[RMDB]
An RNA of 177 nucleotides, treated with DMS and 2A3 and read out base by base. As a SHAPE reagent, 2A3 marks flexible, mostly unpaired nucleotides at the ribose 2'-OH.
RNA sequence: GGGAACGACUCGAGUAGAGUCGAAAAUCUCCUUUGUGUUGUUUAUAGUAACAAAACAAAUUUUGCUCGAAGUACUGUGACAGUACCUAGUCCUUACCGUUACAAGUACAUUAAUAUUCAUUUCCCAAUAUUAUUCUCUGUUCGCAGAGAAUAAUAUAAAAGAAACAACAACAACAAC
Reactivity to DMS in 0.01 (KOAc 150mM, MgCl2 10mM, bicine 150mM(pH8.5), 24C), signal-to-noise 6, nucleotides 027 to 126: u030c080u010c010c120u000u000u010g010u000g010u000u000g000u000u010u010a080u020a140g000u010a020a040c050a040a040a040a050c050a020a050a090u010u010u010u010g000c040u000c090g010a100a110g020u000a000c010u000g000u000g010a010c020a020g010u000a020c120c020u000a140g000u010c130c120u000u000a020c010c040g000u000u000a020c020a050a050g010u000a010c020a100u010u010a060a090u000a090u000u010c050a100u000u000u000c000c000c000a100
Reactivity to 2A3 in 0.01 (KOAc 150mM, MgCl2 10mM, bicine 150mM(pH8.5), 24C), signal-to-noise 4, nucleotides 027 to 126: u010c040u060c010c000u000u060u050g030u020g010u000u010g020u000u030u030a290u070a090g160u150a090a060c050a040a070a040a000c030a020a140a080u100u180u080u140g010c020u030c060g070a090a020g010u000a010c000u000g000u010g020a010c000a020g010u010a010c020c000u040a040g080u010c020c010u020u010a010c000c010g010u010u000a020c030a150a050g010u000a010c010a020u030u150a120a050u080a120u150u100c060a050u040u020u020c000c000c000a010
It was measured as part of the RMDB libraries RFM100 and RFMREP. DMS adducts were read by reverse transcription with MarathonRT.